[RMDB]
RNA sequence: GGGAACGACUCGAGUAGAGUCGAAAACAGUCAAGGUGAAGGCGGGCCAGACCAUCGCCGCAUUCUACCAGAGCACCGUCAUGAUCUUUGGCACGAUGGCUCGCUACAUGCGGAGAGUUAGGGAAAAACGUCCAUUAGCAUUCGUGCUAAUGGACGUAAAAGAAACAACAACAACAAC
Reactivity to DMS in 0.01 (KOAc 150mM, MgCl2 10mM, bicine 150mM(pH8.5), 24C), signal-to-noise 3, nucleotides 027 to 126: c130a120g010u010c090a070a080g000g010u000g010a120a090g000g000c020g000g010g000c010c070a100g000a120c090c030a090u000c070g000c010c030g020c070a030u010u000c060u000a060c010c030a140g010a050g020c070a080c050c020g020u020c060a080u000g020a120u010c060u010u000u000g030g020c030a080c090g010a030u000g000g000c030u000c040g000c080u010a030c140a070u010g010c030g000g000a070g010a080g000u000u000a080g010g010g010a050a040a050a080
Reactivity to 2A3 in 0.01 (KOAc 150mM, MgCl2 10mM, bicine 150mM(pH8.5), 24C), signal-to-noise 1, nucleotides 027 to 126: c040a020g080u060c050a070a040g040g000u020g060a040a030g060g000c010g000g000g060c020c010a020g050a050c020c020a070u080c040g000c030c010g020c010a000u140u010c010u080a090c000c050a040g010a010g030c030a020c060c030g070u040c030a180u100g120a140u050c010u080u110u100g040g010c060a010c120g060a050u090g010g030c030u020c050g000c010u050a020c030a030u080g020c020g030g010a040g000a010g060u100u170a090g010g020g000a050a060a030a030
Record summary:
Chemical mapping of a 177-nucleotide RNA with DMS and 2A3. It was measured as part of the RMDB library OK2TRN. For 2A3 the reverse transcriptase was SuperScript II with manganese. The DMS profile rests on 2,803 reads.